Annotation: Chemical mapping of a 177-nucleotide RNA with DMS and 2A3. For 2A3, 2,131 sequencing reads were counted.

[RMDB]
RNA sequence: GGGAACGACUCGAGUAGAGUCGAAAACACAGACUCAGCCGCGGAUACCAUCCACAGACACCCAGGUGCAGCCAAAGCUGCAGAAGCAGGCGCAAACACAGACCUCUCCAGAGCACUUAGUGCUGCACACAGGCGGAGAAUUCGUUCUCCGCCUGUGAAAAGAAACAACAACAACAAC
Reactivity to DMS in 0.01 (KOAc 150mM, MgCl2 10mM, bicine 150mM(pH8.5), 24C), signal-to-noise 2, nucleotides 027 to 126: c050a050c180a060g000a120c030u000c020a160g010c010c080g060c030g030g000a150u010a090c020c060a050u010c020c000a060c130a060g000a160c090a110c000c010c050a110g000g000u000g000c090a010g000c030c090a060a090a040g000c060u020g000c040a090g000a050a070g010c040a060g000g000c080g020c040a080a090a050c140a100c110a120g000a050c020c000u000c000u000c040c070a130g000a040g000c000a020c020u040u010a050g030u010g000c020u000g000c040a060
Reactivity to 2A3 in 0.01 (KOAc 150mM, MgCl2 10mM, bicine 150mM(pH8.5), 24C), signal-to-noise 3, nucleotides 027 to 126: c090a000c010a010g030a110c020u040c040a020g010c040c010g030c030g060g000a010u040a150c040c000a040u020c020c010a010c020a050g070a060c020a070c000c020c000a030g050g040u010g010c000a000g000c000c060a110a130a060g010c060u030g000c010a040g030a090a030g000c030a010g020g000c020g020c080a060a100a020c080a010c010a050g090a090c000c010u020c000u010c010c020a040g010a000g140c030a010c010u030u060a040g020u050g090c000u030g000c030a030
About this RNA:
It was measured as part of the RMDB library OK1LIB.